[RMDB]
RNA sequence: GGGAACGACUCGAGUAGAGUCGAAAAGCUACGAAGAUGGGAUGAAUAAAGUACAGCGAGUUCGGAUCCCGGUACCGGAAGACGAUGUCCGAGGAGCUGGACAUGUCCACGAAGUUCGUGGACUGAAAACGCGUAGUCGAGAUCAGCAUGUGGUAGCCAUUGUCAGAAUGUUCGCAUUCUGACAAUGAAAAGAAACAACAACAACAAC
Reactivity to DMS in 0.01 (KOAc 150mM, MgCl2 10mM, bicine 150mM(pH8.5), 24C), signal-to-noise 3, nucleotides 027 to 156: g030c030u000a060c030g020a100a110g010a100u000g030g000g000a110u000g020a110a100u000a030a100a120g010u000a100c030a120g040c010g020a190g030u000u000c030g020g000a100u000c040c000c010g000g020u010a080c020c030g010g020a120a100g010a180c050g000a040u010g000u010c000c000g000a120g040g010a160g020c040u000g010g000a080c010a110u000g000u000c000c010a020c000g020a090a190g030u010u000c030g060u000g000g000a010c010u000g000a040a060a100a110c050g010c020g010u000a100g000u000c040g000a120g020a100u010c030a070g040c030a100u010g020u000g030g020u000a050g010c060
Reactivity to 2A3 in 0.01 (KOAc 150mM, MgCl2 10mM, bicine 150mM(pH8.5), 24C), signal-to-noise 7, nucleotides 027 to 156: g010c010u020a010c020g090a080a070g030a050u060g010g030g030a020u060g060a090a160u200a160a090a030g060u090a050c030a030g010c010g020a030g010u030u020c010g000g020a030u030c020c010c000g010g020u060a040c020c010g040g060a050a050g090a070c050g050a060u130g040u030c010c010g030a130g030g020a030g000c020u020g000g000a000c010a030u110g000u000c000c000a000c000g040a150a050g160u210u130c010g000u000g000g000a000c000u010g030a010a030a010a010c040g010c020g030u050a040g050u060c040g010a000g020a100u050c020a010g090c010a030u060g040u090g070g010u020a000g010c010

Structure probing data (DMS and 2A3) for a 207-nucleotide construct. Values are in units of 0.01, from 0 to 300, in steps of 10. DMS adducts were read by reverse transcription with MarathonRT. It was measured as part of the RMDB library OK3TST.